[RMDB]
RNA sequence: GGGAACGACUCGAGUAGAGUCGAAAAUGCUACACCUACUACACGUAAUUACCGGUGUAGCUAAGGUAGUUACGACAACUGAUCCGAGAGGAUCUACAUUAAGGCGAAGGUGAAAUAUAGGUUAAUAGGCACCUGAAGCCGACCCUAUUAACCAACACCCUAUGAGUAUCUUCGGAUACUCAUAGGGAAAAGAAACAACAACAACAAC
Reactivity to 2A3 in 0.01 (KOAc 150mM, MgCl2 10mM, bicine 150mM(pH8.5), 24C), signal-to-noise 5, nucleotides 027 to 156: u120g000c010u010a000c010a010c010c010u060a060c040u110a050c210a040c110g140u150a110a110u140u160a090c060c060g000g000u020g010u000a000g000c000u010a050a020g020g010u020a030g030u040u110a030c060g040a040c110a130a060c140u060g000a000u010c000c010g030a030g000a010g090g010a000u000c000u030a020c010a060u090u110a080a030g020g010c030g030a020a010g010g020u030g050a010a080a000u230a040u090a160g010g000u000u000a000a000u000a010g000g010c010a000c040c010u020g030a030a000g030c010c000g020a030c000c000c000u010a000u000u000a010a000c000c000a040a010c020a020
Reactivity to DMS in 0.01 (KOAc 150mM, MgCl2 10mM, bicine 150mM(pH8.5), 24C), signal-to-noise 2, nucleotides 027 to 156: u000g010c010u000a060c000a030c010c000u000a160c080u000a140c080a140c050g000u000a090a050u030u010a110c050c090g080g000u000g020u000a030g010c100u000a000a100g010g090u000a040g030u000u000a110c070g020a140c080a080a200c030u000g010a030u000c010c000g020a300g030a300g030g000a050u000c000u040a050c130a110u000u000a100a140g010g020c040g000a160a130g010g030u000g030a110a070a080u000a120u010a090g060g020u000u000a000a000u000a010g010g000c020a070c020c040u010g020a060a170g030c080c010g020a090c200c010c030u000a010u000u000a010a060c000c000a130a110c170a100

Annotation
This 207-nucleotide RNA was probed chemically with 2A3 and DMS. For DMS, 2,598 sequencing reads were counted. The RNA was probed in 150 mM KOAc, 10 mM MgCl2 and 150 mM bicine (pH 8.5) at 24 C. The 2A3 profile rests on 3,714 reads. DMS adducts were read by reverse transcription with MarathonRT.